[RMDB]
RNA sequence: GGGAACGACUCGAGUAGAGUCGAAAAGAAGGCCAUGAGGGAAGCCUCAUCCGUACCGGUGACCGUGAAGAUCCGCUCGGGAUGGGACGACCUCUCGCUCACCUACCGGGAGGUGGCCCAGGCGGCCACGACACACUAGGUUCGCCUAGUGUGUCGUAAAAGAAACAACAACAACAAC
Reactivity to DMS in 0.01 (KOAc 150mM, MgCl2 10mM, bicine 150mM(pH8.5), 24C), signal-to-noise 4, nucleotides 027 to 126: g020a130a100g010g030c050c080a040u000g000a300g010g000g010a190a090g020c000c020u000c010a020u010c000c020g020u010a100c300c080g000g000u010g000a150c300c070g000u000g010a090a080g000a040u000c030c040g030c070u000c060g010g000g000a120u000g010g000g000a060c020g010a110c010c000u010c000u000c050g020c200u000c090a090c050c050u010a070c250c020g000g000g000a010g000g000u000g000g020c000c000c010a060g000g010c100g000g000c010c020
Reactivity to 2A3 in 0.01 (KOAc 150mM, MgCl2 10mM, bicine 150mM(pH8.5), 24C), signal-to-noise 2, nucleotides 027 to 126: g070a060a060g010g000c010c050a030u190g050a080g030g010g020a100a050g130c000c010u000c000a070u020c020c010g020u050a040c030c040g020g010u020g030a040c090c060g150u110g110a170a040g020a060u000c060c000g050c030u020c040g130g000g050a100u130g040g000g030a040c020g080a040c000c020u000c010u000c030g000c000u030c040a140c030c000u090a080c040c000g010g010g010a010g010g000u020g050g020c000c010c020a030g130g050c040g050g000c000c010
Overview
This 177-nucleotide RNA was probed chemically with DMS and 2A3. The 2A3 profile rests on 3,062 reads. Source: RMDB library OK2TST, as collected in RNAgym. Conditions: 150 mM KOAc, 10 mM MgCl2 and 150 mM bicine (pH 8.5), 24 C. The DMS profile rests on 3,472 reads.